[RMDB]
RNA sequence: GGGAACGACUCGAGUAGAGUCGAAAAGUGAUGUCGCGCCCCUCUCGAACCUUGUUACACUUGAGGAACUGAAUCUCCACUACUGUGACAAAGUAACCUCUGGAAUGGGAACACUGGGCAGGCUACCCCUCGGAUACAGGUUCGCCUGUAUCCGAGGAAAAGAAACAACAACAACAAC
Reactivity to DMS in 0.01 (KOAc 150mM, MgCl2 10mM, bicine 150mM(pH8.5), 24C), signal-to-noise 2, nucleotides 027 to 126: g000u010g000a010u020g010u010c100g040c190g070c040c010c010c060u020c030u020c060g020a060a100c070c060u000u040g020u060u000a080c070a100c160u000u010g000a080g000g000a020a030c040u030g000a140a070u050c040u020c020c040a060c030u020a070c270u010g040u000g020a000c010a020a070a050g000u000a070a020c010c050u000c000u020g000g010a040a090u000g030g000g020a070a280c090a070c040u000g000g000g000c050a050g000g020c000u000a030c050c010
Reactivity to 2A3 in 0.01 (KOAc 150mM, MgCl2 10mM, bicine 150mM(pH8.5), 24C), signal-to-noise 5, nucleotides 027 to 126: g160u110g070a080u110g010u050c000g020c030g020c060c000c050c010u040c010u010c050g110a070a070c000c010u010u090g060u120u050a070c060a030c030u070u070g010a040g020g040a060a040c040u100g060a130a060u040c010u030c030c030a060c070u170a040c070u080g030u060g040a040c040a080a090a000g000u040a100a150c000c030u010c050u050g010g070a080a050u100g060g020g000a080a010c060a010c110u040g020g010g000c000a000g030g010c010u100a100c020c010
The record gives the reactivity of an RNA of 177 nucleotides to DMS and 2A3.
It was measured as part of the RMDB library OK1LIB.
The DMS profile rests on 1,895 reads.
Conditions: 150 mM KOAc, 10 mM MgCl2 and 150 mM bicine (pH 8.5), 24 C.
Reactivities are given for positions 27 through 126.
For DMS the reverse transcriptase was MarathonRT.